[RMDB]
RNA sequence: GGGAACGACUCGAGUAGAGUCGAAAACCCGGCGUUACCUGUAACCCGAAAUCGCCGAUACGCGGGGGACGAAGCCAAAGGAAGAUGUGCCAGAGAGAUUCCAGCCUGAAGUCUCAACUGAGAAGCCCCGUCCUGCUUGGAUGGUGCAGGUAUGCGGCUAUACGUCAAACUUCGGUUUGACGUAUAGAAAAGAAACAACAACAACAAC
Reactivity to 2A3 in 0.01 (KOAc 150mM, MgCl2 10mM, bicine 150mM(pH8.5), 24C), signal-to-noise 4, nucleotides 027 to 156: c000c000c000g000g020c020g000u020u030a000c020c000u020g050u130a120a180c000c010c030g030a070a080a020u090c090g020c050c040g020a050u050a140c100g000c000g010g000g000g010g020a030c060g070a100a030g030c010c040a120a060a020g120g010a020a050g050a080u100g040u130g100c020c000a020g000a000g000a010g010a090u110u010c080c010a030g050c040c090u080g050a070a020g040u000c010u000c020a060a160c040u090g010a020g030a180a040g040c010c000c000c000g040u030c000c020u060g030c020u060u100g030g030a080u060g010g010u020g000c000a010g000g010u010a020u120g040c010g000g000
Reactivity to DMS in 0.01 (KOAc 150mM, MgCl2 10mM, bicine 150mM(pH8.5), 24C), signal-to-noise 2, nucleotides 027 to 156: c040c010c020g000g010c020g020u000u000a010c040c020u000g040u030a070a120c030c000c060g030a120a100a070u010c010g060c040c020g000a140u000a060c070g020c020g000g010g020g010g000a070c080g040a050a080g020c030c050a100a140a130g010g010a050a010g000a130u010g040u000g030c040c020a130g030a300g000a090g000a050u000u000c000c020a190g000c040c050u000g030a050a080g010u000c010u010c020a060a190c180u000g000a040g040a100a170g010c000c010c010c040g000u020c010c010u010g000c050u010u000g020g020a180u010g010g030u010g020c010a050g020g010u000a060u020g010c040g020g010